[RMDB]
Chemical mapping of a 177-nucleotide RNA with DMS and 2A3. DMS adducts were read by reverse transcription with MarathonRT.
RNA sequence: GGGAACGACUCGAGUAGAGUCGAAAAAGCCUAUGGAUUCGCACGAGAAGGACAUAAACAGCUCAGUAGUGGCACGCUCACAACCUGGUUAUACAUCAGUUGUGAUUAACCACUUACUGUUCUACAACUUGAUUCGAAAGUUCGCUUUCGAAUCAAGAAAAGAAACAACAACAACAAC
Reactivity to DMS in 0.01 (KOAc 150mM, MgCl2 10mM, bicine 150mM(pH8.5), 24C), signal-to-noise 1, nucleotides 027 to 126: a130g030c010c030u000a020u010g010g000a100u010u000c080g060c180a180c160g000a120g010a070a030g010g010a120c120a070u010a060a080a120c160a100g000c090u010c010a000g020u070a000g010u000g010g000c090a030c170g020c300u000c000a010c010a000a000c130c060u000g040g000u000u010a070u000a050c220a000u010c020a000g030u000u000g010u030g010a030u000u000a200a060c000c000a000c000u010u010a000c010u000g020u000u000c010u000a060c190a040a150
Reactivity to 2A3 in 0.01 (KOAc 150mM, MgCl2 10mM, bicine 150mM(pH8.5), 24C), signal-to-noise 2, nucleotides 027 to 126: a000g060c030c040u080a120u100g110g000a110u060u070c110g040c030a060c060g050a050g000a110a030g040g080a000c000a000u140a040a090a000c050a040g020c010u030c030a000g000u030a010g000u000g000g040c240a000c120g040c020u000c000a000c000a010a010c000c070u060g010g010u030u090a160u000a260c110a020u000c030a000g010u000u020g000u010g000a000u000u080a000a010c000c000a000c000u020u060a010c000u020g010u000u030c040u020a000c020a050a040
For 2A3 the reverse transcriptase was SuperScript II with manganese.